[RMDB]
This 177-nucleotide RNA was probed chemically with DMS and 2A3.
For DMS the reverse transcriptase was MarathonRT.
RNA sequence: GGGAACGACUCGAGUAGAGUCGAAAACUAACACCUUUCUAGAAACUGUAGCCCUGCCCAGGAAGGAAACAGAUGCGAUGAGGCAAUCUAGGAAUUUUCCAGAACAACACUGCCCUCUGCAGAUGCAUGUACUAUGUUGUUUCGACAACAUAGUACAAAAAGAAACAACAACAACAAC
Reactivity to DMS in 0.01 (KOAc 150mM, MgCl2 10mM, bicine 150mM(pH8.5), 24C), signal-to-noise 6, nucleotides 027 to 126: c070u000a100a130c160a100c070c030u000u010u000c040u000a090g000a110a110a090c100u000g010u010a110g010c060c020c030u000g000c040c020c030a080g010g010a060a070g000g010a100a060a100c050a040g010a130u000g020c020g010a070u000g010a180g010g010c030a040a060u000c000u010a070g020g030a050a130u000u000u000u000c010c020a080g000a070a080c140a050a050c180a070c120u000g000c040c030c020u000c040u010g010c030a040g000a100u000g020c130a080
Reactivity to 2A3 in 0.01 (KOAc 150mM, MgCl2 10mM, bicine 150mM(pH8.5), 24C), signal-to-noise 4, nucleotides 027 to 126: c030u030a100a020c030a070c060c030u040u080u000c050u040a120g080a150a200a140c080u050g060u140a030g030c000c000c010u030g010c000c020c010a020g010g020a030a040g030g000a040a090a000c020a010g030a030u040g030c030g080a120u110g020a120g050g040c030a040a060u000c020u120a130g050g100a080a090u140u110u140u000c010c010a010g020a080a030c070a030a020c040a050c070u030g000c000c000c020u030c060u070g000c010a010g010a070u090g030c090a060